RNA sequence: GGGAACGACUCGAGUAGAGUCGAAAACUUUGGCAUCCAGAGUCCCACGCGACCUCUUGAAGCGUGGGCGGCAACCGGGUCAAGCGCGAUCACGGUGCCGAGGUCAGCCCUUCUGGGGUGAUGCGGCCACACUAAAGACCUUCGGGUCUUUAGUGUGAAAAGAAACAACAACAACAAC
Reactivity to 2A3 in 0.01 (KOAc 150mM, MgCl2 10mM, bicine 150mM(pH8.5), 24C), signal-to-noise 1, nucleotides 027 to 126: c060u190u090u130g050g000c020a030u000c040c050a030g020a000g060u060c000c020c000a000c020g000c010g030a030c020c010u070c020u100u130g050a020a000g000c010g000u000g000g000g000c030g010g000c020a060a050c000c000g000g000g000u000c030a050a110g230c100g030c120g150a010u010c010a010c160g000g030u000g040c000c000g000a010g000g010u030c010a040g020c030c000c000u100u100c060u230g030g000g000g020u110g030a040u060g040c050g060g000c040
Reactivity to DMS in 0.01 (KOAc 150mM, MgCl2 10mM, bicine 150mM(pH8.5), 24C), signal-to-noise 3, nucleotides 027 to 126: c060u000u000u010g010g000c050a040u000c060c210a060g000a030g010u000c000c000c000a010c010g020c010g000a060c030c070u000c060u000u000g000a060a130g010c020g030u000g000g000g000c020g000g000c000a020a010c010c000g000g000g000u000c000a100a160g010c200g010c200g010a010u000c000a050c000g010g000u000g000c000c000g000a020g000g000u010c090a300g010c000c000c000u000u010c260u010g000g000g000g010u000g010a030u000g010c040g010g010c110
Structure probing data (2A3 and DMS) for a 177-nucleotide construct. For DMS the reverse transcriptase was MarathonRT.